Record summary: Source: RMDB libraries RFM100 and RFMREP, as collected in RNAgym. This 177-nucleotide RNA was probed chemically with 2A3 and DMS. As a SHAPE reagent, 2A3 marks flexible, mostly unpaired nucleotides at the ribose 2'-OH. Reactivities are given for positions 27 through 126. DMS adducts were read by reverse transcription with MarathonRT.
RNA sequence: GGGAACGACUCGAGUAGAGUCGAAAAGUGUGUGUGUGUAUAUGCUUGUCAGUGCAUGCACGUGUAUGUCUGGGAGUACAAAUGGGUGCGACUGGUUGUAGGGAACUAGCUAUGUGCCUUCUAUUAGGUGUUGCAUUAGUUUCGACUAAUGCAACACAAAAGAAACAACAACAACAAC
Reactivity to 2A3 in 0.01 (KOAc 150mM, MgCl2 10mM, bicine 150mM(pH8.5), 24C), signal-to-noise 9, nucleotides 027 to 126: g110u090g020u020g000u000g000u000g000u000g040u030a030u020a090u150g040c060u130u190g110u270c020a020g010u010g050c010a010u020g020c010a000c050g030u050g020u020a050u030g070u010c040u040g020g010g030a050g040u060a050c040a040a140a090u130g020g000g010u020g030c030g040a030c020u010g020g030u040u040g040u040a050g000g030g000a010a010c020u010a010g020c020u030a040u170g030u030g000c010c000u050u070c040u080a200u150u100a100g110
Reactivity to DMS in 0.01 (KOAc 150mM, MgCl2 10mM, bicine 150mM(pH8.5), 24C), signal-to-noise 2, nucleotides 027 to 126: g040u020g020u000g010u000g020u000g020u000g010u000a020u010a090u000g020c060u000u000g020u030c020a030g010u000g020c020a020u000g000c010a030c040g020u010g000u010a020u000g000u010c050u020g000g010g010a140g000u000a060c110a040a100a070u010g010g010g000u010g010c030g010a090c060u000g000g010u000u000g020u020a110g000g000g010a060a060c050u010a050g000c080u010a110u010g010u000g010c040c000u000u010c080u000a100u010u020a110g010